This 177-nucleotide RNA was probed chemically with DMS and 2A3. Conditions: 150 mM KOAc, 10 mM MgCl2 and 150 mM bicine (pH 8.5), 24 C.
RNA sequence: GGGAACGACUCGAGUAGAGUCGAAAACAGCACGACACCAGCGCCGCCCGGAUGGCCUCCGGCAUGACAUCGCGUGCCCGCCGACCGGAAUCCCACAUUUUCGCUGGGUAAGCCGGGGCGUUUGCUGCAACAACGGGGGAUUCGUCCCCCGUUGUUGAAAAGAAACAACAACAACAAC
Reactivity to DMS in 0.01 (KOAc 150mM, MgCl2 10mM, bicine 150mM(pH8.5), 24C), signal-to-noise 1, nucleotides 027 to 126: c050a070g000c050a010c070g000a080c000a070c000c060a080g000c000g000c070c010g010c100c010c000g000g020a040u020g010g020c060c020u000c060c070g030g000c030a020u030g000a110c070a090u030c050g030c020g010u020g020c060c040c100g000c030c010g000a170c000c010g010g000a050a070u010c010c000c000a010c050a150u010u000u000u040c140g010c110u000g000g000g000u020a030a060g030c000c000g020g000g000g000c020g030u000u000u000g000c000u000g020
Reactivity to 2A3 in 0.01 (KOAc 150mM, MgCl2 10mM, bicine 150mM(pH8.5), 24C), signal-to-noise 3, nucleotides 027 to 126: c040a000g030c000a010c060g100a000c020a050c030c010a040g020c010g030c030c010g030c010c040c000g030g020a080u160g050g030c000c000u020c010c020g050g010c040a040u100g010a070c030a120u100c100g000c000g080u020g000c010c010c000g010c000c030g070a080c000c000g020g040a020a100u150c000c070c000a000c000a020u190u220u140u150c050g070c150u040g000g000g030u020a010a050g030c000c020g010g000g000g000c000g000u010u040u040g010c000u000g010